This 177-nucleotide RNA was probed chemically with 2A3 and DMS. The RNA was probed in 150 mM KOAc, 10 mM MgCl2 and 150 mM bicine (pH 8.5) at 24 C. For DMS, 1,550 sequencing reads were counted. For 2A3 the reverse transcriptase was SuperScript II with manganese. It was measured as part of the RMDB library OK2TRN. For 2A3, 938 sequencing reads were counted.
RNA sequence: GGGAACGACUCGAGUAGAGUCGAAAAUGGAAGCUGCGCUGACCGAGGGGCUGACUCACCCGGCCAUCUGCCGCCUGUACGCGCAUGCGCUGCGCAGUCACUCGCGAGUCAGCAGUGACGAAUGGCAUAUUUGACCGUGAUUCGUCACGGUCAAAUAAAAAGAAACAACAACAACAAC
Reactivity to 2A3 in 0.01 (KOAc 150mM, MgCl2 10mM, bicine 150mM(pH8.5), 24C), signal-to-noise 1, nucleotides 027 to 126: u060g080g020a140a030g000c000u090g060c060g000c070u040g060a090c030c020g010a120g030g020g050g020c040u020g000a050c000u040c080a050c000c000c000g000g090c090c000a120u060c110u090g040c020c030g060c000c000u120g020u180a030c100g000c000g000c030a010u160g080c220g080c120u010g000c070g040c040a020g020u000c100a000c010u030c030g030c010g030a000g060u040c040a020g000c010a010g010u020g020a010c000g040a010a040u090g040g150c030a000
Reactivity to DMS in 0.01 (KOAc 150mM, MgCl2 10mM, bicine 150mM(pH8.5), 24C), signal-to-noise 2, nucleotides 027 to 126: u020g000g010a120a180g020c050u000g010c070g020c010u020g000a060c080c060g010a140g000g010g000g010c080u000g020a080c050u010c070a110c060c120c040g000g010c040c070a110u010c080u010g040c100c050g010c020c080u010g000u030a090c250g010c030g020c040a030u000g030c130g000c040u000g030c110g050c050a080g010u000c000a030c010u000c120g020c050g000a130g000u000c030a020g020c020a030g020u000g000a080c030g010a050a070u020g020g010c090a200